[RMDB]
This 177-nucleotide RNA was probed chemically with 2A3 and DMS. For 2A3 the reverse transcriptase was SuperScript II with manganese. The 2A3 profile rests on 9,365 reads. The reactions ran in a buffer of 150 mM KOAc, 10 mM MgCl2 and 150 mM bicine (pH 8.5), at 24 C. High 2A3 reactivity points to a flexible backbone, as in loops and unpaired stretches.

RNA sequence: GGGAACGACUCGAGUAGAGUCGAAAAACAUUCAUUGACGCAGCACGAGGCCCCGCAGGUGUGGAGUCUGAUGUUGAGACCAAUGAAAUUGUUGACUCUGUGCAGUAUGCUCAUAAACAUGACAUACCCCUUAUAUAUAGUUCGCUAUAUAUAAGGGAAAAGAAACAACAACAACAAC
Reactivity to 2A3 in 0.01 (KOAc 150mM, MgCl2 10mM, bicine 150mM(pH8.5), 24C), signal-to-noise 4, nucleotides 027 to 126: a000c010a020u010u020c000a010u010u000g010a000c040g000c040a010g010c000a010c040g090a050g010g010c000c000c020c010g010c020a170g120g300u280g030u030g120g010a020g010u000c000u030g070a110u010g020u020u010g030a050g020a080c040c000a000a010u010g000a010a010a030u130u070g010u010u040g010a040c010u000c020u060g090u090g060c010a020g000u010a010u020g010c010u000c020a020u090a080a270a060c100a040u040g000a000c000a000u010a020c000
Reactivity to DMS in 0.01 (KOAc 150mM, MgCl2 10mM, bicine 150mM(pH8.5), 24C), signal-to-noise 7, nucleotides 027 to 126: a030c030a070u000u000c010a020u000u000g000a100c050g010c010a020g000c010a020c080g000a040g010g000c000c010c000c010g040c010a240g020g040u020g040u000g010g000a040g010u000c000u000g010a040u000g010u000u000g000a090g000a150c090c010a010a010u000g000a010a030a110u010u000g010u000u000g010a130c060u000c030u000g010u010g020c160a130g010u000a010u000g010c180u000c010a020u010a100a100a100c210a210u000g000a060c030a030u000a040c040